[RMDB]
RNA sequence: GGGAACGACUCGAGUAGAGUCGAAAAUUACAUUUGCUUUCUAGCACUUUUCUAUUCUCGUUUCCUUUUUUUGUACCUUCCCCUUUUGAAUUUUCCAUCGUAUAAGCCUCAGAAAUUUGGUAGACACUAGAACCACUUUUUUCGAAAAGUGGUUCUAAAAAGAAACAACAACAACAAC
Reactivity to DMS in 0.01 (KOAc 150mM, MgCl2 10mM, bicine 150mM(pH8.5), 24C), signal-to-noise 1, nucleotides 027 to 126: u020u040a110c080a180u010u040u010g000c060u030u030u010c050u040a090g000c050a030c040u000u000u010u000c040u000a080u000u000c020u000c030g000u000u000u000c000c000u000u000u010u030u010u030u030g020u010a030c050c020u000u000c030c030c000c040u000u030u000u000g000a040a040u000u030u010u000c010c000a090u020c050g000u000a020u010a090a140g000c030c000u000c120a020g000a040a050a110u000u000u030g000g030u000a010g020a140c190a020c080